[RMDB]
RNA sequence: GGGAACGACUCGAGUAGAGUCGAAAAUGGAAGCAGUUGUUCAACUCUCCCCAAAGUUUUCCACAUACUGAUAUACCAUCAGAAGAAGGUACCAAAGUUAUUCUAUAAGAGUCCUUCAGCGUGGUUAAAUAUCGAGCCUGUUCGCAGGCUCGAUAUUAAAAGAAACAACAACAACAAC
Reactivity to 2A3 in 0.01 (KOAc 150mM, MgCl2 10mM, bicine 150mM(pH8.5), 24C), signal-to-noise 1, nucleotides 027 to 126: u050g000g160a060a100g090c160a140g000u140u140g130u300u160c000a040a040c020u090c000u090c100c120c000c000a070a120a120g000u210u000u010u000c070c000a020c000a000u190a110c070u000g030a020u020a050u000a110c160c000a000u170c040a010g050a110a000g000a000a000g000g220u040a050c020c000a000a000a160g070u070u110a300u190u050c020u020a180u140a300a000g000a020g050u050c040c030u020u020c000a000g020c020g010u000g000g000u140u070a060
Reactivity to DMS in 0.01 (KOAc 150mM, MgCl2 10mM, bicine 150mM(pH8.5), 24C), signal-to-noise 1, nucleotides 027 to 126: u000g000g000a160a050g050c160a040g000u000u000g000u000u020c090a000a080c000u000c000u000c090c040c000c040a070a200a040g010u010u000u000u030c000c000a110c150a140u030a050c150u000g000a000u000a040u040a020c300c110a000u000c030a030g010a130a030g030a030a070g000g040u010a020c000c080a140a120a260g000u000u010a030u000u030c060u000a080u030a060a040g000a030g000u000c000c000u000u000c000a160g070c190g020u000g000g000u070u040a000